[RMDB]
An RNA of 207 nucleotides, treated with 2A3 and read out base by base.
RNA sequence: GGGAACGACUCGAGUAGAGUCGAAAAAUCAAAGCCACCCAGACGCAAGUGGUCUGCGACAUGUUCACCAGCCAACGAUUCUAUGAGAUUUUUCCAUUCGACAACAAACCCGACGCAUCGAAAAUGUCUGAACCCGUUAAGAUGAUCAUGUACGCUGCGCCAGAAGAUUUUUCGAAAUCUUCUGGCGAAAAGAAACAACAACAACAAC
Reactivity to 2A3 in 0.01 (KOAc 150mM, MgCl2 10mM, bicine 150mM(pH8.5), 24C), signal-to-noise 1, nucleotides 027 to 156: a010u040c010a020a080a000g020c000c000a000c020c020c020a070g090a080c050g030c040a140a060g030u030g050g030u000c010u010g040c080g010a040c010a030u090g000u040u060c030a010c000c000a010g110c020c050a030a050c010g020a010u040u020c010u070a140u140g130a120g030a080u040u050u060u130u040c000c030a060u060u070c050g090a050c040a140a000c040a090a150a120c040c000c000g010a030c030g000c020a030u000c020g000a000a000a050a050u100g020u000c000u010g040a030a060c000c130c000g000u060u020a020a000g020a080u060g000a010u070c020a070u070g060u120a040c020g010c000u130g040
The RNA was probed in 150 mM KOAc, 10 mM MgCl2 and 150 mM bicine (pH 8.5) at 24 C.